[RMDB]
RNA sequence: GGGAACGACUCGAGUAGAGUCGAAAAGGAUGCAACGUAGUAAUAUGUGUGACAGCUACCUCUUGAGUCACACAUUACUAGUCGUAAUGCGAUUCAAGAGGUAUCUCGCGUUACGACAUCUGUAUCGCUACUACUGUCUAUUCGUAGAUAGUAGUAGAAAAGAAACAACAACAACAAC
Reactivity to DMS in 0.01 (KOAc 150mM, MgCl2 10mM, bicine 150mM(pH8.5), 24C), signal-to-noise 9, nucleotides 027 to 126: g010g000a010u000g010c010a040a130c300g010u000a020g010u000a020a040u000a060u010g030u000g020u000g010a110c120a100g010c130u000a070c020c010u000c010u000u000g000a110g010u000c000a020c050a060c020a020u000u000a000c000u000a110g010u000c070g010u000a000a000u000g010c040g000a040u000u000c030a020a020g000a020g000g010u010a040u000c040u000c020g020c010g010u000u000a010c010g000a030c010a080u000c130u000g020u000a020u000c010g000
Reactivity to 2A3 in 0.01 (KOAc 150mM, MgCl2 10mM, bicine 150mM(pH8.5), 24C), signal-to-noise 9, nucleotides 027 to 126: g040g000a000u010g000c010a030a040c080g060u060a070g010u010a020a060u050a100u200g030u000g010u010g030a060c050a060g060c050u060a060c010c010u040c000u030u060g080a030g020u000c000a000c000a000c000a010u000u000a000c000u020a030g050u020c020g000u000a000a000u000g000c010g010a020u030u020c020a030a010g020a020g080g020u020a050u010c010u000c010g000c000g000u000u000a000c010g010a010c010a020u050c070u040g010u010a010u010c010g000
The record gives the reactivity of an RNA of 177 nucleotides to DMS and 2A3. For DMS, 152,455 sequencing reads were counted. The data come from the RNA Mapping Database (RMDB), library OK2TRN. Reactivities are given for positions 27 through 126. 2A3 adducts were read by reverse transcription with SuperScript II with manganese. DMS adducts were read by reverse transcription with MarathonRT. Conditions: 150 mM KOAc, 10 mM MgCl2 and 150 mM bicine (pH 8.5), 24 C.